[RMDB]
Background:
Chemical mapping of a 177-nucleotide RNA with 2A3 and DMS. The RNA was probed in 150 mM KOAc, 10 mM MgCl2 and 150 mM bicine (pH 8.5) at 24 C. The 2A3 profile rests on 649 reads.
RNA sequence: GGGAACGACUCGAGUAGAGUCGAAAACGGUAUUGCAGUUACAUUGGCGAAGUCUGCCCAAAAAACUGUAUAACUAGAAAAAAUGAGAGAAGCAUGGAGUCACGCAAUCGGUUUGUAUAGUGCUAAACACACCUAUGCCUUUCGAGGCAUAGGUGUGAAAAGAAACAACAACAACAAC
Reactivity to 2A3 in 0.01 (KOAc 150mM, MgCl2 10mM, bicine 150mM(pH8.5), 24C), signal-to-noise 2, nucleotides 027 to 126: c050g000g000u090a060u090u050g000c000a010g000u030u000a040c020a220u040u010g030g000c030g000a150a000g200u030c040u120g050c000c000c110a010a040a000a080a000a000c000u000g000u020a040u070a100a010c030u120a040g260a080a030a000a000a000a080u220g020a010g000a000g000a140a000g010c030a000u100g050g070a110g030u050c010a010c100g050c060a010a100u150c080g000g000u020u030u000g000u000a060u090a090g060u050g080c030u050a050a060a000
Reactivity to DMS in 0.01 (KOAc 150mM, MgCl2 10mM, bicine 150mM(pH8.5), 24C), signal-to-noise 2, nucleotides 027 to 126: c140g000g020u000a160u020u000g020c020a000g000u000u040a120c120a170u020u000g000g030c040g030a080a190g030u060c170u010g020c090c010c060a000a000a130a080a020a040c020u000g020u010a030u010a080a030c020u020a080g010a010a030a030a040a100a050u030g000a040g000a050g000a130a030g000c050a020u000g000g020a080g020u010c000a020c060g010c060a020a030u020c110g010g000u030u000u030g020u010a030u010a120g000u000g000c040u000a030a090a200